[RMDB]
RNA sequence: GGGAACGACUCGAGUAGAGUCGAAAAGCACGGCGCGCGCCGCUUCGCCGAGGUCGUAGGAACUCGGGCACACCAGGUUGCCCACGUUUUCCAGAAACAGCACGUCGAGGGCCGCGAGGUCGAAGCGCUCCGUUUUAUUCUUCGGAAUAAAACGGAGAAAAGAAACAACAACAACAAC
Reactivity to DMS in 0.01 (KOAc 150mM, MgCl2 10mM, bicine 150mM(pH8.5), 24C), signal-to-noise 2, nucleotides 027 to 126: g000c060a110c010g030g010c030g020c050g030c030g020c130c040g000c030u000u000c030g000c090c010g000a120g010g030u000c020g010u000a160g000g000a030a050c030u000c110g010g000g010c020a040c040a180c180c250a190g000g020u050u010g020c000c000c020a130c090g000u000u000u000u000c020c050a140g020a140a080a060c050a070g000c060a040c040g020u000c050g000a090g010g010g020c120c020g010c040g000a100g040g020u000c020g010a060a040g010c030g030
Reactivity to 2A3 in 0.01 (KOAc 150mM, MgCl2 10mM, bicine 150mM(pH8.5), 24C), signal-to-noise 1, nucleotides 027 to 126: g020c010a040c060g040g030c060g000c010g010c040g020c050c050g210c000u040u020c020g030c010c000g010a180g000g030u100c020g030u120a040g050g000a000a010c010u020c080g000g020g000c020a010c000a010c030c110a070g130g000u190u040g000c040c000c010a050c040g010u000u050u000u000c000c000a030g090a040a210a000c020a000g020c060a000c040g030u030c010g020a070g060g000g000c000c030g040c020g000a000g040g000u010c010g030a060a020g000c020g010